[RMDB]
Chemical mapping of a 177-nucleotide RNA with DMS and 2A3. Conditions: 150 mM KOAc, 10 mM MgCl2 and 150 mM bicine (pH 8.5), 24 C. The 2A3 profile rests on 3,545 reads.
RNA sequence: GGGAACGACUCGAGUAGAGUCGAAAAUUGCGCUCGGAGCGAGUGUCUUUCGGGUUUACGACUGCGGGUAAGCCUGCCUUGCUACGUCCGGUGUCCGGGGACGAUCGCCCUGUGGCGGGUCUGAAUGAAUUAACACAGACUUCGGUCUGUGUUAAUUAAAAGAAACAACAACAACAAC
Reactivity to DMS in 0.01 (KOAc 150mM, MgCl2 10mM, bicine 150mM(pH8.5), 24C), signal-to-noise 4, nucleotides 027 to 126: u010u020g010c020g010c010u000c030g010g000a050g020c020g000a050g000u020g000u000c020u000u020u050c010g020g000g000u010u010u050a180c180g000a050c060u010g000c040g010g000g010u000a030a100g030c110c110u020g000c050c010u010u040g020c030u010a050c110g000u010c040c050g010g030u030g000u000c000c010g010g010g000g000a020c010g010a070u010c020g000c000c020c010u010g030u040g010g020c000g000g010g010u010c030u000g000a060a070u050g000
Reactivity to 2A3 in 0.01 (KOAc 150mM, MgCl2 10mM, bicine 150mM(pH8.5), 24C), signal-to-noise 5, nucleotides 027 to 126: u130u120g090c010g000c010u020c030g000g000a070g000c010g000a010g050u150g000u020c010u010u110u290c030g010g030g030u050u130u160a040c020g010a020c020u040g000c040g010g000g020u060a080a050g070c020c090u010g000c000c010u110u260g000c010u100a110c120g010u010c040c030g100g020u030g010u000c000c000g010g000g010g010a000c020g020a030u010c010g020c020c000c010u050g050u110g010g000c020g010g040g020u030c030u030g110a180a150u200g030